[RMDB]
RNA sequence: GGGAACGACUCGAGUAGAGUCGAAAACUCUGUGAUGUUCGGUCCGUACCACGGUCGCGAGUUCCGUAUGAAGCACCGGCACCGGCUAUCUGGCGUGCUCUACAUGGUUACCAGUUCUACCUUUGUGCGGUGACAGGAUGCGGACACUGCAGUCACCCGGCAUGAUUCGUUUCGACGAAUCAUGCCGAAAAGAAACAACAACAACAAC
Reactivity to 2A3 in 0.01 (KOAc 150mM, MgCl2 10mM, bicine 150mM(pH8.5), 24C), signal-to-noise 1, nucleotides 027 to 156: c050u010c000u020g030u040g070a160u000g050u050u060c040g000g000u020c000c000g110u010a070c000c100a030c070g000g000u060c060g000c050g180a210g050u140u130c030c040g000u040a020u140g020a050a020g070c010a040c000c120g000g020c020a060c100c200g020g000c040u010a000u260c020u080g020g000c100g010u050g050c040u120c020u080a140c040a000u200g000g060u220u140a060c010c010a000g000u090u000c000u010a000c000c000u030u140u030g140u080g000c000g000g000u050g010a050c000a020g060g020a060u070g300c000g000g000a010c000a010c070u020g050c000a030g000u080c120a040c020c020